[RMDB]
RNA sequence: GGGAACGACUCGAGUAGAGUCGAAAAUAAUCAGUCUAUUUCAAGACUAUACACAUUUCCAGAAGAAUCAUGUUACAUACGGAGAGGCCAUCUAUCAAAAAUGAUCUUCUUUGAUGGUCCAGACUUACGAUUUAGUGACUUUCGAGUCACUAAAUCGAAAAGAAACAACAACAACAAC
Reactivity to DMS in 0.01 (KOAc 150mM, MgCl2 10mM, bicine 150mM(pH8.5), 24C), signal-to-noise 3, nucleotides 027 to 126: u000a140a150u010c140a010g000u010c010u000a130u010u000u010c170a060a060g020a050c010u000a110u010a120c180a150c180a150u000u000u010c040c020a090g000a070a020g000a050a090u010c040a000u000g000u000u010a110c170a090u000a050c210g010g000a080g030a160g010g000c020c000a010u010c000u000a190u000c040a010a050a070a070a030u000g000a030u000c060u000u000c030u000u010u000g000a010u010g020g010u010c100c090a130g010a050c120u000u000a100
Reactivity to 2A3 in 0.01 (KOAc 150mM, MgCl2 10mM, bicine 150mM(pH8.5), 24C), signal-to-noise 3, nucleotides 027 to 126: u090a010a080u130c080a000g020u000c000u020a090u070u300u170c080a090a040g010a010c010u010a030u200a060c100a000c030a040u000u030u000c000c010a000g000a040a000g010a020a040u040c050a040u070g100u210u190a140c070a080u250a080c120g070g040a090g000a090g040g040c000c010a010u000c010u070a090u160c050a040a070a190a050a040u060g010a060u030c020u070u000c010u130u140u080g010a000u010g020g010u000c020c010a020g050a070c010u070u100a020
Description
This 177-nucleotide RNA was probed chemically with DMS and 2A3. The RNA was probed in 150 mM KOAc, 10 mM MgCl2 and 150 mM bicine (pH 8.5) at 24 C. The data come from the RNA Mapping Database (RMDB), library OK2TST. The 2A3 profile rests on 1,571 reads.